[RMDB]
RNA sequence: GGGAACGACUCGAGUAGAGUCGAAAAAGGUGAUUUCUCCUGCACCUUUAUCAAUGGAGGAACUCGACUUUGCUGUGGGUCCCAAAGGGACCUUAGGGGCAGACAGUUACCGGCGGUGAAGUGUGAGCAUAGGUUCGUGUCUUCGGACACGAACCAAGUCCUAUGUUUUGUUCGCAAAACAUAGGACAAAAGAAACAACAACAACAAC
Reactivity to DMS in 0.01 (KOAc 150mM, MgCl2 10mM, bicine 150mM(pH8.5), 24C), signal-to-noise 1, nucleotides 027 to 156: a050g000g030u020g010a300u000u000u000c020u010c010c010u010g050c050a070c020c050u010u000u000a060u030c160a120a020u000g040g010a070g060g000a060a090c070u000c020g000a050c000u010u000u010g030c040u020g030u010g070g020g020u000c020c060c010a060a100a200g050g000g030a050c010c040u010u000a030g000g000g030g090c000a050g000a090c070a160g010u000u010a050c000c010g060g030c050g000g080u000g010a020a050g030u000g010u000g010a110g000c070a050u000a120g020g020u000u000c000g030u020g020u000c020u000u000c300g060g010a030c000a010c010g000a000a010c010c020a020a110
Reactivity to 2A3 in 0.01 (KOAc 150mM, MgCl2 10mM, bicine 150mM(pH8.5), 24C), signal-to-noise 3, nucleotides 027 to 156: a000g010g000u010g000a040u030u050u060c020u020c010c000u150g080c040a030c000c030u100u270u110a030u020c050a020a030u300g010g000a000g000g000a020a020c000u000c020g030a030c010u050u030u030g000c010u030g010u080g040g000g000u020c020c000c000a180a170a110g010g000g000a010c040c000u000u100a020g010g000g000g000c020a020g080a300c040a010g040u050u080a140c010c010g010g000c020g000g030u020g020a040a020g020u090g070u060g100a020g050c070a090u090a190g000g000u000u000c000g000u000g010u000c000u010u040c190g060g000a000c010a000c000g010a000a000c000c000a010a000